[RMDB]
RNA sequence: GGGAACGACUCGAGUAGAGUCGAAAACAACGUCCUAGUGGUCGGAGCAGCCUUCGUAUUCGUCGUGACGAUGCUUUUCAUCUGACGAAGAACGAUCACCGCAGACAACCGAACUCCUGAAAGCAAAACACAUAAAAAGUUUCGACUUUUUAUGUGUAAAAGAAACAACAACAACAAC
Reactivity to DMS in 0.01 (KOAc 150mM, MgCl2 10mM, bicine 150mM(pH8.5), 24C), signal-to-noise 9, nucleotides 027 to 126: c150a100a130c170g000u000c010c020u000a090g020u010g010g000u000c010g000g000a120g010c060a070g000c070c100u000u010c020g020u000a160u000u000c000g010u000c010g010u020g010a030c090g010a040u000g010c280u010u010u010u010c020a080u000c020u010g000a020c010g000a030a030g010a080a070c020g000a030u010c080a060c060c060g030c100a080g000a090c100a090a100c050c030g000a070a080c080u000c040c030u010g000a070a050a070g010c120a070a070a110
Reactivity to 2A3 in 0.01 (KOAc 150mM, MgCl2 10mM, bicine 150mM(pH8.5), 24C), signal-to-noise 9, nucleotides 027 to 126: c050a010a040c050g060u020c000c010u030a040g030u020g050g020u030c020g030g030a060g020c050a020g020c030c030u050u050c040g020u030a070u010u010c010g000u000c050g060u070g050a040c070g030a030u070g080c120u150u110u100u120c020a040u000c030u060g000a010c010g000a010a010g020a050a020c010g000a000u040c020a010c030c010g000c010a030g030a080c020a040a030c030c010g050a050a040c020u030c030c010u070g080a130a020a000g040c030a020a050a080
The data come from the RNA Mapping Database (RMDB), libraries RFM100 and RFMREP. The record gives the reactivity of an RNA of 177 nucleotides to DMS and 2A3. The reactions ran in a buffer of 150 mM KOAc, 10 mM MgCl2 and 150 mM bicine (pH 8.5), at 24 C. DMS adducts were read by reverse transcription with MarathonRT. Reactivities are given for positions 27 through 126.